[RMDB]
RNA sequence: GGGAACGACUCGAGUAGAGUCGAAAAUGCAUGCCGAGAAGGAGAUCUCUCGUAAAUAAGACUCAAUUAAAUAUAAAUGCAAACGAUGAAAACUUUGCUGGUGGGGAAGCUAUCGCUGCCUAAUAAGCACUUUAGUUAAACCAUCACUGUGUACUGGCACGUAUUAAUUGUUCGCAAUUAAUACGUGAAAAGAAACAACAACAACAAC
Reactivity to DMS in 0.01 (KOAc 150mM, MgCl2 10mM, bicine 150mM(pH8.5), 24C), signal-to-noise 1, nucleotides 027 to 156: u000g040c020a140u020g050c070c020g040a090g010a170a050g030g020a130g010a110u000c020u000c000u000c030g000u000a050a080a110u000a060a060g050a240c070u000c010a070a170u030u030a070a060a170u000a090u000a080a100a080u000g010c020a050a050a080c030g000a090u000g000a150a120a130a110c050u000u000u000g000c000u020g000g010u000g000g010g000g000a300a110g000c020u000a020u000c050g020c110u000g030c000c000u000a090a050u000a050a070g020c010a020c020u020u000u000a000g000u000u010a050a250a300c000c000a040u000c010a100c110u000g030u000g000u000a030c050u010g020g000
Reactivity to 2A3 in 0.01 (KOAc 150mM, MgCl2 10mM, bicine 150mM(pH8.5), 24C), signal-to-noise 6, nucleotides 027 to 156: u130g020c030a020u080g040c020c010g010a010g010a020a040g110g030a040g020a100u000c010u000c000u000c020g100u130a020a060a020u060a030a060g020a020c010u020c010a020a110u210u180a070a120a040u250a040u070a090a130a020u080g000c020a040a060a020c070g060a040u140g110a060a060a100a090c050u100u120u100g040c060u060g020g000u000g000g020g000g010a040a030g000c000u000a000u010c010g100c220u000g000c010c000u060a100a030u250a140a010g000c000a000c000u000u010u000a020g010u060u030a080a010a020c000c000a000u010c010a010c010u060g010u010g030u070a070c060u040g070g000
Structure probing data (DMS and 2A3) for a 207-nucleotide construct. The reactions ran in a buffer of 150 mM KOAc, 10 mM MgCl2 and 150 mM bicine (pH 8.5), at 24 C. Source: RMDB library RSTRND, as collected in RNAgym.